[RMDB]
RNA sequence: GGGAACGACUCGAGUAGAGUCGAAAAUAAAACACGUAACGUGAGCACAGCUAGUAGUGCAGCAGGACCGAAACCUGCAGCGAAAGGGAUCUAGACCCUGUUCGCGCAAAAACUAGAGAAAAAAAAAACCUUACGAAUGAUUCGUCAUUCGUAAGGUAAAAGAAACAACAACAACAAC
Reactivity to 2A3 in 0.01 (KOAc 150mM, MgCl2 10mM, bicine 150mM(pH8.5), 24C), signal-to-noise 2, nucleotides 027 to 126: u100a000a050a010a030c030a000c050g100u190a280a000c080g010u050g070a050g010c000a000c010a010g020c000u020a010g020u010a010g000u010g010c030a000g000c010a000g020g010a050c010c070g020a040a010a020c000c010u010g000c010a000g000c000g020a010a020a000g040g000g000a010u080c100u240a080g130a210c000c020c010u080g200u050u020c020g000c000g000c000a000a000a000a080a000c000u020a000g020a050g100a140a070a030a000a000a000a000a000a010
Reactivity to DMS in 0.01 (KOAc 150mM, MgCl2 10mM, bicine 150mM(pH8.5), 24C), signal-to-noise 3, nucleotides 027 to 126: u020a070a080a120a130c030a000c020g000u000a140a070c100g020u010g000a210g020c010a000c010a050g010c000u000a020g000u000a020g010u000g010c010a140g010c020a000g000g000a070c040c080g000a120a050a110c000c000u000g010c000a180g000c010g010a000a080a030g000g000g010a150u010c250u020a180g000a140c000c000c010u000g000u000u000c000g010c010g000c130a010a010a030a030a020c020u000a000g020a300g030a130a010a000a000a000a070a050a100a080